The data come from the RNA Mapping Database (RMDB), library OK2TRN. Structure probing data (DMS and 2A3) for a 177-nucleotide construct. 2A3 adducts were read by reverse transcription with SuperScript II with manganese. High DMS reactivity at an A or C suggests that its Watson-Crick edge is free. The 2A3 profile rests on 13,738 reads. Values are in units of 0.01, from 0 to 300, in steps of 10. The RNA was probed in 150 mM KOAc, 10 mM MgCl2 and 150 mM bicine (pH 8.5) at 24 C.
RNA sequence: GGGAACGACUCGAGUAGAGUCGAAAAAGAAGACAUCGUUAUCGUCGACCUCAUUGAGGGCGAUGGUGCAGAAGCACAGCCAGGUGGCCUUGUAGAGGUUCACUACGUAGGCGUCGACUUUGAAAACAUGUAGUGAUAACUUCGGUUAUCACUACAUAAAAGAAACAACAACAACAAC
Reactivity to DMS in 0.01 (KOAc 150mM, MgCl2 10mM, bicine 150mM(pH8.5), 24C), signal-to-noise 7, nucleotides 027 to 126: a050g010a090a190g010a060c040a070u000c060g020u000u000a020u010c020g020u000c010g010a030c000c000u010c010a270u010u010g010a010g020g000g010c000g010a010u000g010g030u000g010c060a110g030a070a110g010c060a040c070a170g000c040c060a150g010g010u000g000g010c010c010u000u000g000u010a070g010a050g010g000u000u010c080a040c010u000a050c160g010u000a060g020g010c020g020u000c020g000a200c010u000u000u000g000a110a070a090a100c190
Reactivity to 2A3 in 0.01 (KOAc 150mM, MgCl2 10mM, bicine 150mM(pH8.5), 24C), signal-to-noise 9, nucleotides 027 to 126: a000g060a020a000g040a010c020a060u080c070g090u130u160a040u080c030g040u050c010g050a090c010c000u040c080a300u100u300g010a030g000g010g000c020g010a000u020g030g000u020g000c050a050g050a220a020g040c030a010c030a070g020c030c010a020g030g020u010g020g000c000c000u100u070g180u170a100g030a020g200g010u290u300c010a010c020u090a040c050g100u080a110g010g030c000g000u010c000g000a030c010u060u070u100g160a110a120a000a010c100